RNA sequence: GGGAACGACUCGAGUAGAGUCGAAAAAAAGAUAUGGACAUUAGGGAGCAGAAGUCUCGCUGUGAUAGCGACUCGGAAACGAGUCGCUGGAGCGAGUCGCUGCUUUGAUCUAAUGUCCUAAGUCAAACAGUAUGCGUAUCUUCGGAUACGCAUACUGAAAAGAAACAACAACAACAAC
Reactivity to DMS in 0.01 (KOAc 150mM, MgCl2 10mM, bicine 150mM(pH8.5), 24C), signal-to-noise 2, nucleotides 027 to 126: a060a040a110g020a030u000a300u020g000g000a010c030a010u000u000a030g000g000g020a020g040c000a010g030a070a150g030u000c000u010c010g040c020u010g020u000g030a100u000a000g020c000g000a000c000u000c000g020g030a170a100a230c010g000a000g010u000c010g040c000u000g010g000a030g020c000g010a000g000u000c010g010c000u000g000c000u000u000u010g030a090u040c010u000a010a000u000g000u000c000c000u000a010a070g000u000c030a130a120a200
Reactivity to 2A3 in 0.01 (KOAc 150mM, MgCl2 10mM, bicine 150mM(pH8.5), 24C), signal-to-noise 1, nucleotides 027 to 126: a000a000a030g110a070u150a120u170g010g000a000c000a000u000u010a010g010g000g040a000g020c000a010g050a300a080g090u040c000u000c000g000c030u300g050u040g300a030u030a010g000c010g000a000c000u000c010g030g000a000a100a050c010g000a000g000u010c000g020c020u020g000g000a010g000c030g010a010g000u030c010g000c000u020g010c000u090u080u100g030a030u040c000u010a000a000u020g000u000c000c000u010a010a000g030u000c030a120a040a060

An RNA of 177 nucleotides, treated with DMS and 2A3 and read out base by base. For 2A3, 2,096 sequencing reads were counted.